[RMDB]
RNA sequence: GGGAACGACUCGAGUAGAGUCGAAAAGUCUGACGCAAUCUGCGAGAGGUUUUUGCGAUCGUCAGGCGACAAAUGCAUCUCCAUUAAAGAGCCACCGCCUUGCUGGCUCCAGUCACUCUGCGAGGCACCACCACCAGGCCUUCGGGCCUGGUGGUGGAAAAGAAACAACAACAACAAC
Reactivity to 2A3 in 0.01 (KOAc 150mM, MgCl2 10mM, bicine 150mM(pH8.5), 24C), signal-to-noise 2, nucleotides 027 to 126: g000u000c000u030g010a040c000g010c080a050a040u040c240u300g000c050g060a100g000a030g040g150u170u180u040u060u260g000c020g020a020u070c000g040u030c000a000g000g010c000g000a010c020a000a100a000u190g050c020a160u070c000u000c030c000a110u160u160a190a170a050g020a000g000c010c040a010c000c000g050c000c010u000u020g000c010u000g020g000c000u000c000c070a000g070u170c000a020c130u090c060u100g000c000g010a000g000g010c000a020

An RNA of 177 nucleotides, treated with 2A3 and read out base by base.
The RNA was probed in 150 mM KOAc, 10 mM MgCl2 and 150 mM bicine (pH 8.5) at 24 C.
It was measured as part of the RMDB library OK1LIB.
For 2A3, 581 sequencing reads were counted.